This 207-nucleotide RNA was probed chemically with DMS and 2A3. Values cover nucleotides 27 to 156. The DMS profile rests on 10,768 reads. DMS adducts were read by reverse transcription with MarathonRT. It was measured as part of the RMDB library OK3TST.
[RMDB]
RNA sequence: GGGAACGACUCGAGUAGAGUCGAAAAGGACUCCGUGAGGAGUCCGUGCACCGAGAGGUGCACAAGGGCGAAGUAUGUCUCGGUGCCCCUCCUCCUCGAUGUUGAGAGGAGGAGAGAUGUCGUCUCACGAUUUAUAGUGAGACUGACUUGAGACACGAUAAUAUAUCUCAUUCGUGAGAUAUAUUAUAAAAGAAACAACAACAACAAC
Reactivity to DMS in 0.01 (KOAc 150mM, MgCl2 10mM, bicine 150mM(pH8.5), 24C), signal-to-noise 4, nucleotides 027 to 156: g020g000a010c000u000c000c010g000u000g000a270g040g050a050g020u000c010c010g040u010g010c000a010c000c000g030a300g000a300g030g020u010g010c000a000c010a050a080g010g010g000c040g010a160a200g010u010a090u010g020u000c000u000c010g010g000u010g020c020c000c000c000u000c000c000u010c000c010u000c000g000a190u000g010u000u000g010a300g010a010g020g000a010g010g000a010g010a010g000a040u000g010u000c020g000u000c010u000c000a010c000g010a270u000u000u010a130u000a100g000u000g000a020g000a000c000u010g010a010c010u000u010g010a030g010a020c010a010c020g010
Reactivity to 2A3 in 0.01 (KOAc 150mM, MgCl2 10mM, bicine 150mM(pH8.5), 24C), signal-to-noise 2, nucleotides 027 to 156: g000g000a000c000u010c000c000g020u030g030a020g010g000a000g010u000c000c000g010u000g000c010a000c000c000g030a030g000a010g000g000u010g030c000a000c000a010a030g000g010g010c020g040a060a010g070u110a030u060g000u000c000u000c000g040g040u110g000c000c000c000c000u000c000c000u000c000c000u000c000g050a040u060g030u130u060g030a030g000a000g020g000a000g000g000a000g000a000g000a000u020g000u000c000g000u000c000u000c000a000c000g020a020u000u220u060a170u120a050g000u000g000a000g010a000c010u010g000a000c000u000u060g000a000g000a000c000a000c010g000